Description
Conditions: 150 mM KOAc, 10 mM MgCl2 and 150 mM bicine (pH 8.5), 24 C. Chemical mapping of a 177-nucleotide RNA with 2A3 and DMS. For DMS the reverse transcriptase was MarathonRT. For 2A3 the reverse transcriptase was SuperScript II with manganese. For 2A3, 929 sequencing reads were counted. The DMS profile rests on 1,218 reads. The data come from the RNA Mapping Database (RMDB), library OK1LIB.
RNA sequence: GGGAACGACUCGAGUAGAGUCGAAAAUAUACAUCAGAAGUCGGCACAACUCCCGACUCGCGGUGAGCGAUGCAGCGUAGCGCGAGCUACGCAGCUGCUGUGCGGAUGGCUAGCUCCCGCUAGCCUAGAGUAUCGGUCGUUUCGACGACCGAUACUCAAAAGAAACAACAACAACAAC
Reactivity to 2A3 in 0.01 (KOAc 150mM, MgCl2 10mM, bicine 150mM(pH8.5), 24C), signal-to-noise 2, nucleotides 027 to 126: u080a000u000a020c070a040u090c030a050g080a190a000g030u010c000g020g090c210a060c040a300a290c070u080c040c000c000g020a030c020u000c000g000c080g050g000u070g020a060g000c010g060a090u140g050c070a040g000c010g010u040a000g000c000g000c030g110a000g000c000u000a000c000g000c000a000g000c000u020g000c010u010g020u110g060c000g190g040a190u220g000g030c000u010a000g000c020u060c000c000c010g020c000u000a000g000c000c010u040a010
Reactivity to DMS in 0.01 (KOAc 150mM, MgCl2 10mM, bicine 150mM(pH8.5), 24C), signal-to-noise 1, nucleotides 027 to 126: u030a120u110a180c080a030u000c060a000g020a110a090g050u000c010g020g060c160a100c150a090a120c290u010c140c000c090g000a030c030u020c010g000c300g000g000u000g000a030g000c070g070a100u000g000c080a010g000c000g020u000a000g000c020g000c300g060a130g040c010u000a000c000g020c020a030g030c010u000g000c000u000g050u000g000c040g000g000a090u030g000g000c000u000a000g000c020u000c020c010c090g000c020u000a010g000c020c010u000a020